[RMDB]
RNA sequence: GGGAACGACUCGAGUAGAGUCGAAAAUAACAGCAACAAUUCGUGGCAGCAACGCUCCCGCGACUUGAUCGACAAGGGACUGGCCACCUGCGAGGCGGUCGAGCGGAGUCCUGCUCCGCCAUCAUCCUACAUAUCCCACUUUCGAGUGGGAUAUGUAAAAAGAAACAACAACAACAAC
Reactivity to DMS in 0.01 (KOAc 150mM, MgCl2 10mM, bicine 150mM(pH8.5), 24C), signal-to-noise 5, nucleotides 027 to 126: u010a090a090c100a080g000c080a060a110c040a030a110u000u000c080g010u000g020g030c130a060g000c060a060a110c200g000c060u010c170c010c010g000c040g010a020c080u000u000g010a120u000c040g010a120c100a100a140g000g000g000a070c070u020g000g010c010c010a040c020c020u000g010c120g000a090g000g010c030g000g010u000c040g000a090g000c010g010g000a030g010u000c150c150u000g000c010u000c010c020g010c000c040a060u010c110a080u000c060c020
Reactivity to 2A3 in 0.01 (KOAc 150mM, MgCl2 10mM, bicine 150mM(pH8.5), 24C), signal-to-noise 3, nucleotides 027 to 126: u090a030a050c040a020g080c040a010a040c000a090a110u080u080c030g000u030g020g000c010a020g020c060a140a130c160g000c030u010c000c000c000g020c000g030a020c010u080u160g040a100u210c040g080a070c080a090a110g040g000g030a030c040u070g080g000c000c010a010c010c000u080g010c050g080a090g020g030c020g010g030u080c060g020a000g030c030g000g000a010g010u020c000c040u070g090c000u000c000c020g010c030c000a030u090c000a010u050c010c010